[RMDB]
RNA sequence: GGGAACGACUCGAGUAGAGUCGAAAAGAUAUGGACCAUUGAGCUAGCUAAGUCGGAAACGACUAUAGCUUGGACCUCAUUGGUCCUAAGUCAAAGUAGUUGCCAACGUUCGCGUUGGCAACUACAACGUACAGAUUGGGUUCGCCCAAUCUGUACGAAAAGAAACAACAACAACAAC
Reactivity to DMS in 0.01 (KOAc 150mM, MgCl2 10mM, bicine 150mM(pH8.5), 24C), signal-to-noise 2, nucleotides 027 to 126: g010a040u000a150u020g000g000a040c000c000a020u000u000g000a010g040c070u000a030g010c000u000a020a020g000u000c000g000g000a060a050a080c020g010a000c000u000a140u000a000g020c000u000u010g030g000a140c300c010u000c000a000u000u000g000g000u000c000c000u000a010a030g020u010c030a080a140a100g010u000a000g010u000u000g000c000c000a000a010c000g020u000u020c240g010c000g000u000u000g000g000c000a010a000c010u000a010c000a040a070
An RNA of 177 nucleotides, treated with DMS and read out base by base. For DMS the reverse transcriptase was MarathonRT. Reactivities are rounded to 0.1 and cut off at 0 and 3.